RNA sequence: GGGAACGACUCGAGUAGAGUCGAAAAGAUAUGGACGCAGGAGGACGCAACAGCUCGGAAACGAGACAUGCGUACCUCUGCGUCCUAAGUCAAAACACGACUUGCUACUUCGGUAGCAAGUCGUGAAGUAAGUAAGACACUUCGGUGUCUUACUUACAAAAGAAACAACAACAACAAC
Reactivity to DMS in 0.01 (KOAc 150mM, MgCl2 10mM, bicine 150mM(pH8.5), 24C), signal-to-noise 4, nucleotides 027 to 126: g010a050u000a300u000g000g010a010c000g010c000a020g010g010a040g010g000a050c000g000c000a030a080c260a190g000c010u000c000g020g000a090a090a190c000g010a020g000a040c080a180u000g000c000g000u010a070c000c000u000c000u010g010c000g000u010c000c000u010a010a070g000u010c040a080a070a120a210c000a000c000g000a010c000u000u000g000c000u000a000c000u000u010c210g020g010u010a010g000c000a000a010g000u000c000g010u000g000a010a070
Reactivity to 2A3 in 0.01 (KOAc 150mM, MgCl2 10mM, bicine 150mM(pH8.5), 24C), signal-to-noise 3, nucleotides 027 to 126: g010a000u050a040u090g000g000a000c010g020c000a020g070g300a060g020g000a030c000g010c010a030a100c040a200g030c000u000c020g000g030a070a040a030c020g010a000g020a020c030a070u060g000c010g020u120a180c010c000u010c000u000g000c000g000u000c000c000u010a000a000g000u010c010a000a000a060a110c010a000c000g020a010c000u000u000g030c000u010a010c010u040u080c300g130g000u020a000g000c010a000a000g000u000c000g000u000g000a000a000
The record gives the reactivity of an RNA of 177 nucleotides to DMS and 2A3. For 2A3, 11,146 sequencing reads were counted. Reactivities are rounded to 0.1 and cut off at 0 and 3. For 2A3 the reverse transcriptase was SuperScript II with manganese. DMS adducts were read by reverse transcription with MarathonRT. The RNA was probed in 150 mM KOAc, 10 mM MgCl2 and 150 mM bicine (pH 8.5) at 24 C.